[RMDB]
RNA sequence: GGGAACGACUCGAGUAGAGUCGAAAAUGUGUGAUCCUGAAAUGGUGUCUUAACCUCUCUGGGCCUCGUAUUCUCUUCAUUGAUAAAAUGGAGCUAACCACACCUUGCGACACACUCAUCUAGUAGGGUCAAAAGAUGGAUAGACUCAAACUGCAUGCUAACUAAAUGCUUUCGAGCAUUUAGUUAGAAAAGAAACAACAACAACAAC
Reactivity to 2A3 in 0.01 (KOAc 150mM, MgCl2 10mM, bicine 150mM(pH8.5), 24C), signal-to-noise 6, nucleotides 027 to 156: u070g040u000g060u050g030a130u040c010c000u040g040a060a050a070u160g020g010u050g020u040c080u110u100a080a050c010c000u010c010u000c020u030g040g000g000c010c030u050c020g010u040a110u070u030c040u000c000u030u080c030a070u030u110g100a090u250a190a110a030a020u070g070g000a010g000c020u030a050a030c020c010a020c010a020c030c000u020u060g020c030g040a010c010a010c000a040c110u060c030a160u020c060u030a040g090u090a050g070g010g010u030c030a070a060a010a010g040a040u060g030g020a020u020a080g050a080c010u010c070a080a070a060c050u100g020c040a090u140g020
Reactivity to DMS in 0.01 (KOAc 150mM, MgCl2 10mM, bicine 150mM(pH8.5), 24C), signal-to-noise 3, nucleotides 027 to 156: u000g010u000g050u000g000a060u000c010c010u010g000a090a100a060u010g030g040u000g000u020c050u000u010a110a150c080c020u000c020u020c030u000g030g020g020c000c020u010c060g000u000a090u010u000c060u000c010u000u000c000a050u000u020g010a160u020a050a080a020a090u010g000g000a040g020c110u000a070a080c030c050a040c030a040c010c000u000u010g020c300g030a070c030a040c050a060c020u000c060a100u010c090u020a110g030u000a090g000g020g040u010c010a040a190a030a090g000a070u000g000g000a150u000a120g010a060c030u000c020a030a030a080c070u000g000c070a120u000g020